[RMDB]
RNA sequence: GGGAACGACUCGAGUAGAGUCGAAAAGCUUAAUAACCUGCGCUGAGCCCUUCUCCCCCAGCUUGCCUUUGUCCUAGGGAAUUGGAAGGUCAUCCUUCACAGGAUCGUGUGGAAGUCCUGCUCGGGGUCCAAACAUGGUAAUUCGUUACCAUGUUAAUCCUCAGUAGAGAUUCGUCUCUACUGAGGAAAAAGAAACAACAACAACAAC
Reactivity to 2A3 in 0.01 (KOAc 150mM, MgCl2 10mM, bicine 150mM(pH8.5), 24C), signal-to-noise 1, nucleotides 027 to 156: g000c000u130u000a040a030u080a260a200c030c030u130g060c050g020c070u090g030a050g070c000c000c020u060u060c130u060c010c000c000c010c000a010g040c050u020u000g010c000c000u050u000u210g010u070c010c020u050a040g000g000g040a030a060u030u090g080g010a030a030g040g050u060c070a130u170c000c000u030u030c020a000c000a080g020g020a010u070c050g020u080g000u050g130g030a050a010g040u020c000c000u010g020c000u010c010g000g000g000g000u030c020c080a030a000a000c000a000u000g010g000u000a000a010u090u120c080g040u030u000a000c000c000a000u000g000u000u010a000a020
Reactivity to DMS in 0.01 (KOAc 150mM, MgCl2 10mM, bicine 150mM(pH8.5), 24C), signal-to-noise 2, nucleotides 027 to 156: g000c020u000u010a080a100u000a080a100c030c020u000g000c050g010c050u010g010a130g010c010c010c040u000u000c030u000c010c000c000c010c040a080g010c040u000u000g000c000c030u000u000u000g020u000c030c040u030a100g000g020g000a060a120u000u000g010g030a070a030g020g030u000c080a100u000c010c010u000u000c060a110c060a030g030g000a070u000c080g020u000g060u010g010g020a100a080g000u010c000c010u000g020c000u000c080g000g000g030g000u010c030c070a090a040a020c000a000u000g000g000u000a010a060u010u000c300g010u000u000a010c000c000a000u000g020u000u000a060a140